[RMDB]
RNA sequence: GGGAACGACUCGAGUAGAGUCGAAAACUCGGUUAAUUCGUUAACCGAGACUUCUUAAAGAUCUUUUCAACACAUAGAUGGUAAAUAUUCAAAGAUGUUCGAAUGCGAUAAACUUCGGUUUAUCGAAAUACUCAGUUUGUUUCGACAAACUGAGUAUAAAAGAAACAACAACAACAAC
Reactivity to DMS in 0.01 (KOAc 150mM, MgCl2 10mM, bicine 150mM(pH8.5), 24C), signal-to-noise 4, nucleotides 027 to 126: c010u000c000g010g000u000u000a010a040u010u000c160g010u000u000a000a010c000c000g020a010g000a050c070u000u000c000u000u000a070a080a110g000a070u010c020u000u000u000u010c030a050a080c070a040c110a100u010a100g020a090u000g000g020u000a050a070a100u010a060u000u000c080a060a090a110g010a060u000g000u010u000c130g020a060a060u010g000c010g000a020u000a010a020a010c000u000u000c200g020g000u000u010u000a010u000c000g000a020a050
Reactivity to 2A3 in 0.01 (KOAc 150mM, MgCl2 10mM, bicine 150mM(pH8.5), 24C), signal-to-noise 3, nucleotides 027 to 126: c000u000c000g000g010u020u020a030a020u050u060c080g030u020u010a000a000c000c000g000a000g010a000c000u040u020c000u030u130a170a100a040g070a070u020c000u060u050u020u050c030a060a010c020a000c010a150u120a100g060a140u030g010g040u060a070a160a100u100a100u050u040c020a010a080a050g080a070u050g080u030u020c040g080a070a060u160g080c010g000a000u000a000a020a000c000u030u050c170g060g000u000u010u000a000u000c000g000a030a010

The record gives the reactivity of an RNA of 177 nucleotides to DMS and 2A3. The 2A3 profile rests on 3,082 reads. Source: RMDB library M2PK50, as collected in RNAgym. For DMS, 3,753 sequencing reads were counted. DMS adducts were read by reverse transcription with MarathonRT.